[RMDB]
RNA sequence: GGGAACGACUCGAGUAGAGUCGAAAAUGCCGAACAACAUGCUGCGAGCUUAGAAGAGAUUGCUCAAGCCUUGUUAGAGCAUGCACCGCGCAACGCCAUUUGGGUCGGCUGGUCACUGGGUGGCUUACGUCAUAAUCGCAUUCGUGCGAUUAUGACGAAAAGAAACAACAACAACAAC
Reactivity to 2A3 in 0.01 (KOAc 150mM, MgCl2 10mM, bicine 150mM(pH8.5), 24C), signal-to-noise 2, nucleotides 027 to 126: u030g000c010c000g040a060a010c040a000a000c000a040u060g020c000u030g010c090g020a010g010c010u110u190a080g080a190a020g060a060g070a160u080u160g040c020u020c030a020a000g000c030c030u000u130g040u040u080a070g020a010g050c020a030u060g040c040a030c030c080g040c000g010c080a070a100c020g000c000c020a030u070u040u010g050g000g030u070c030g060g030c060u060g050g020u050c030a030c120u060g050g030g010u020g000g000c010u050u070a040
Reactivity to DMS in 0.01 (KOAc 150mM, MgCl2 10mM, bicine 150mM(pH8.5), 24C), signal-to-noise 3, nucleotides 027 to 126: u010g010c030c040g010a110a040c060a020a060c140a040u010g010c030u000g000c130g010a110g010c010u010u020a100g010a130a110g000a120g010a100u020u000g000c000u010c030a160a090g000c060c150u000u000g020u000u000a130g000a070g010c000a040u010g020c140a150c020c050g010c090g010c070a060a100c090g010c050c030a090u000u010u000g010g010g010u000c050g000g000c010u000g000g020u000c060a060c070u000g000g020g020u000g000g000c020u000u000a070